[RMDB]
Structure probing data (DMS and 2A3) for a 207-nucleotide construct. For DMS, 4,540 sequencing reads were counted. Values cover nucleotides 27 to 156. For 2A3 the reverse transcriptase was SuperScript II with manganese. The 2A3 profile rests on 1,709 reads.

RNA sequence: GGGAACGACUCGAGUAGAGUCGAAAAUACUCAAUUACAGAGUAGGGUGUCCUUAGAAAGCAAAAGGAAGAACUCACUACCUUAAACAUAGUGCUUGCUUCUAUAGGUUGUUAAGAAUAGUGUACUUUAUUACAAAGACUUGUGAUCAGCUUGUGACCUAAAUCAUAAAAUUCGUUUUAUGAUUUAGAAAAGAAACAACAACAACAAC
Reactivity to DMS in 0.01 (KOAc 150mM, MgCl2 10mM, bicine 150mM(pH8.5), 24C), signal-to-noise 3, nucleotides 027 to 156: u000a070c020u000c040a100a160u010u010a160c120a140g010a070g020u010a030g000g020g030u000g000u000c020c030u000u010a090g010a100a050a150g030c040a050a070a140a200g000g010a050a060g000a040a060c050u000c040a040c020u000a030c020c040u000u010a100a120a170c190a040u000a000g030u000g020c040u000u000g000c020u010u000c040u000a110u000a090g000g010u000u000g010u000u000a060a100g010a040a080u000a060g010u000g020u000a040c060u000u000u000a070u020u000a120c040a060a060a120g010a060c060u000u000g010u000g000a090u000c070a070g020c050u000u010g010u000g010a130c120
Reactivity to 2A3 in 0.01 (KOAc 150mM, MgCl2 10mM, bicine 150mM(pH8.5), 24C), signal-to-noise 4, nucleotides 027 to 156: u030a000c010u020c010a060a060u230u110a150c090a090g050a010g030u040a030g050g020g040u050g020u010c010c000u020u050a060g040a100a110a000g030c080a050a050a030a050g080g020a050a060g040a090a090c020u030c030a040c010u060a070c030c020u130u230a080a110a030c040a050u090a030g020u040g050c020u040u040g020c000u020u040c010u030a090u060a070g100g000u030u060g010u050u040a060a030g040a090a120u140a140g040u030g010u060a060c020u120u140u080a100u120u080a100c030a030a100a030g030a090c030u060u080g030u040g050a040u080c000a010g050c020u060u050g020u080g050a030c000